[RMDB]
This 177-nucleotide RNA was probed chemically with 2A3 and DMS.
The reactions ran in a buffer of 150 mM KOAc, 10 mM MgCl2 and 150 mM bicine (pH 8.5), at 24 C.
Source: RMDB library M2PK50, as collected in RNAgym.
For 2A3 the reverse transcriptase was SuperScript II with manganese.
RNA sequence: GGGAACGACUCGAGUAGAGUCGAAAACCCCUUCAGUUCGCUGAAGGGGAAAGGGUUCUCCCGCCCGCCGUGAACCCAGGCUAAAAGUUAACGUAGGUGGGCAAACCCUACUCUUCGGAGUAGGGAACGAGAACAUAGUCUUCGGACUAUGUUCUCGAAAAGAAACAACAACAACAAC
Reactivity to 2A3 in 0.01 (KOAc 150mM, MgCl2 10mM, bicine 150mM(pH8.5), 24C), signal-to-noise 2, nucleotides 027 to 126: c010c000c010c000u010u000c000a060g010u010u120c150g020c100u010g020a000a000g000g000g010g040a030a030a100g000g000g000u000u000c010u010c020c020c040g010c000c000c010g030c000c000g000u020g010a010a000c000c000c020a030g110g070c030u030a040a110a040a100g080u110u120a120a010c120g080u060a060g020g010u000g000g010g000c000a010a010a020c010c000c000u000a000c010u010c010u010u080c230g150g010a000g000u000a000g000g000g000a020a010
Reactivity to DMS in 0.01 (KOAc 150mM, MgCl2 10mM, bicine 150mM(pH8.5), 24C), signal-to-noise 1, nucleotides 027 to 126: c000c000c000c010u000u000c000a030g000u000u040c230g040c000u000g000a000a000g000g040g020g010a010a000a060g020g020g000u000u000c020u000c040c050c160g020c010c010c000g030c000c000g050u000g000a010a000c010c010c010a200g030g020c170u000a010a010a110a210g000u000u010a100a040c120g000u000a030g010g000u000g000g000g050c010a060a020a050c000c000c020u050a010c000u000c000u000u000c230g010g000a000g000u000a010g020g000g000a000a010